Annotation: Chemical mapping of a 177-nucleotide RNA with DMS and 2A3. The data come from the RNA Mapping Database (RMDB), library OK2TST. For DMS the reverse transcriptase was MarathonRT. For 2A3, 5,859 sequencing reads were counted. High 2A3 reactivity points to a flexible backbone, as in loops and unpaired stretches.

RNA sequence: GGGAACGACUCGAGUAGAGUCGAAAACGAUCUUAGCCUCUGUGGCGAGCUGGCCACCGAUCUCUUGGCCGUUCCCUUGCUUUUAGGCAUGGGACUUCGCGAACUUAGCGUCGGUUCCGCAUCGCUCCAAGUAUCGUCCAUUCGUGGACGAUACUUGAAAAGAAACAACAACAACAAC
Reactivity to DMS in 0.01 (KOAc 150mM, MgCl2 10mM, bicine 150mM(pH8.5), 24C), signal-to-noise 4, nucleotides 027 to 126: c060g010a080u000c080u000u010a100g020c070c030u000c130u000g020u000g000g020c000g020a050g020c100u000g010g000c030c030a070c060c060g000a060u000c050u010c060u000u010g010g000c030c040g000u000u000c010c000c000u010u000g000c030u000u000u000u010a120g020g010c020a020u000g000g000g010a050c270u000u010c050g010c030g040a110a080c120u000u000a110g010c160g010u000c040g000g000u010u000c030c030g010c120a090u000c060g000c060u010c120
Reactivity to 2A3 in 0.01 (KOAc 150mM, MgCl2 10mM, bicine 150mM(pH8.5), 24C), signal-to-noise 4, nucleotides 027 to 126: c000g060a080u070c030u110u160a050g050c020c010u060c100u130g070u090g030g030c030g030a050g050c140u180g080g020c000c020a020c010c020g030a100u030c020u000c000u090u040g050g010c010c010g010u050u010c020c000c000u000u040g040c060u150u230u070u290a110g060g000c000a020u040g020g020g000a010c030u040u050c040g000c020g060a110a110c060u100u090a070g010c010g050u010c020g030g060u070u000c020c020g000c040a120u080c060g030c030u030c010